[RMDB]
RNA sequence: GGGAACGACUCGAGUAGAGUCGAAAAAGAGGGCGGUUGGCUCUUCAGCCUGGUGGCUUCUCCCCCUGGGAGGGCUCUCGGGUUGGGGGCAGCACAGGCUGAGUCCCCCCAUCAGCCUCUGCUGGACUCUGCUGUCUUUAUUCGUAAAGACAGCAGAAAAAGAAACAACAACAACAAC
Reactivity to DMS in 0.01 (KOAc 150mM, MgCl2 10mM, bicine 150mM(pH8.5), 24C), signal-to-noise 1, nucleotides 027 to 126: a070g000a050g000g010g010c050g000g030u010u010g000g000c020u010c030u010u000c020a020g000c000c010u010g010g030u000g000g000c020u000u010c020u010c010c010c010c140c170u020g000g000g000a030g000g000g010c090u000c030u000c010g000g010g010u000u000g020g010g000g010g010c010a010g010c000a030c110a020g000g010c000u010g000a030g010u000c020c010c010c020c000c030a190u010c010a030g000c000c010u000c170u000g000c010u000g000g010a190c170
This 177-nucleotide RNA was probed chemically with DMS. The reactions ran in a buffer of 150 mM KOAc, 10 mM MgCl2 and 150 mM bicine (pH 8.5), at 24 C.